[RMDB]
RNA sequence: GGGAACGACUCGAGUAGAGUCGAAAAAGGGCCUGGUCGAUUAGUGAGACCAGGUGCGACGCGGGGGCUACAGCCCGGCCUCAGCGAGGUCCCCUCGGUAGGUGCCUUCCGCGUCACGGAGCGCCGUGUAACGGUUUAACUUCGGUUAAACCGUUACAAAAGAAACAACAACAACAAC
Reactivity to 2A3 in 0.01 (KOAc 150mM, MgCl2 10mM, bicine 150mM(pH8.5), 24C), signal-to-noise 1, nucleotides 027 to 126: a000g120g000g010c000c000u010g010g070u010c000g010a110u110u300a190g220u110g200a140g010a010c000c000a010g000g000u010g000c030g000a000c000g000c010g000g000g020g000g010c000u080a030c020a020g060c000c000c040g020g010c000c000u080c080a040g200c050g010a000g000g030u300c120c080c010c000u050c020g000g190u090a010g000g010u030g000c000c000u130u080c000c000g000c000g000u000c000a000c010g000g000a080g040c100g040c000c070g010u000
Reactivity to DMS in 0.01 (KOAc 150mM, MgCl2 10mM, bicine 150mM(pH8.5), 24C), signal-to-noise 1, nucleotides 027 to 126: a120g020g010g000c000c000u000g000g010u000c000g000a270u010u040a120g020u010g010a300g020a020c000c000a000g020g010u000g030c050g010a010c000g000c010g000g000g000g010g040c010u000a060c130a250g000c000c010c030g000g000c000c010u000c190a090g020c090g010a050g010g000u010c050c090c030c020u000c020g020g000u010a050g000g010u000g010c010c030u000u000c000c010g000c020g000u010c020a060c090g000g000a090g010c070g020c020c030g000u000
Structure probing data (2A3 and DMS) for a 177-nucleotide construct. It was measured as part of the RMDB library RFMREP. Values cover nucleotides 27 to 126. The reactions ran in a buffer of 150 mM KOAc, 10 mM MgCl2 and 150 mM bicine (pH 8.5), at 24 C.